[RMDB]
RNA sequence: GGGAACGACUCGAGUAGAGUCGAAAAGUCUAUUAUGAGAGCAUGUCUUACCAGGAGCAAGAUGAACUUUUUGCCAUGACAAAGCGUAACGUCAUUCCUACCAUGACUCAAAUGAAUCUAAAAUAUGCAUUUCAAAUCAGUUCGCUGAUUUGAAAUGAAAAGAAACAACAACAACAAC
Reactivity to 2A3 in 0.01 (KOAc 150mM, MgCl2 10mM, bicine 150mM(pH8.5), 24C), signal-to-noise 3, nucleotides 027 to 126: g020u000c030u040a100u130u010a140u220g040a020g010a000g020c010a000u010g030u000c030u070u110a050c020c060a040g060g000a040g010c020a030a050g020a070u040g030a020a110c010u050u040u020u050u130g040c020c050a070u130g010a090c020a040a030a000g030c040g040u030a050a050c030g010u000c010a030u040u050c010c000u000a040c000c000a060u060g050a070c010u000c070a010a050a100u090g020a030a070u050c040u140a060a050a060a100u200a050u090g010
Reactivity to DMS in 0.01 (KOAc 150mM, MgCl2 10mM, bicine 150mM(pH8.5), 24C), signal-to-noise 3, nucleotides 027 to 126: g020u000c040u000a080u010u000a070u010g000a170g000a080g030c030a040u000g040u030c060u030u000a120c190c070a040g000g020a100g010c180a040a060g000a040u000g000a100a080c070u010u000u000u000u000g020c040c100a080u010g010a050c050a060a100a120g030c100g010u000a050a070c130g010u000c040a090u000u000c000c010u000a100c180c050a060u010g000a050c070u000c070a060a130a050u000g000a040a050u020c060u010a060a090a120a080u010a090u020g000